[RMDB]
RNA sequence: GGGAACGACUCGAGUAGAGUCGAAAAACAGCCGCCGCCGGUGGCCAAUGACACCCGUAUCGUGCUCGGCCGGCUAGACCAAAAGCUUUACGCCAGCGCCGAAGCCACCGACUCCAAGGCCGCGGCCGAGCGUAGAUGGUUUCGACCAUCUACGCUCAAAAGAAACAACAACAACAAC
Reactivity to 2A3 in 0.01 (KOAc 150mM, MgCl2 10mM, bicine 150mM(pH8.5), 24C), signal-to-noise 1, nucleotides 027 to 126: a000c000a000g030c000c020g010c000c000g030c000c020g040g000u020g000g020c010c010a200a190u140g050a020c000a050c070c010c020g070u130a100u180c080g010u030g000c000u010c030g020g010c000c000g030g000c030u010a010g050a050c000c080a100a220a030a060g050c030u040u060u060a030c080g000c020c020a050g000c030g000c110c010g000a030a030g020c000c000a000c010c020g100a110c040u050c070c030a100a070g010g000c000c000g000c000g010g030c000c030
Reactivity to DMS in 0.01 (KOAc 150mM, MgCl2 10mM, bicine 150mM(pH8.5), 24C), signal-to-noise 2, nucleotides 027 to 126: a120c100a150g010c000c030g060c020c180g020c010c010g000g030u010g000g020c030c140a050a040u000g010a170c040a110c020c050c150g000u020a130u000c110g010u010g000c140u000c040g010g010c000c010g000g000c010u000a060g040a010c050c060a110a100a060a230g000c120u000u000u000a060c190g020c010c020a050g050c170g010c020c010g000a060a170g010c000c000a040c020c050g010a040c040u000c080c150a090a080g020g010c050c260g010c000g010g000c050c070
This 177-nucleotide RNA was probed chemically with 2A3 and DMS. Reactivities are given for positions 27 through 126. The RNA was probed in 150 mM KOAc, 10 mM MgCl2 and 150 mM bicine (pH 8.5) at 24 C. 2A3 is a SHAPE reagent: it acylates the 2'-hydroxyl of flexible nucleotides of all four kinds. The DMS profile rests on 899 reads. For 2A3, 1,434 sequencing reads were counted. It was measured as part of the RMDB library OK2TST.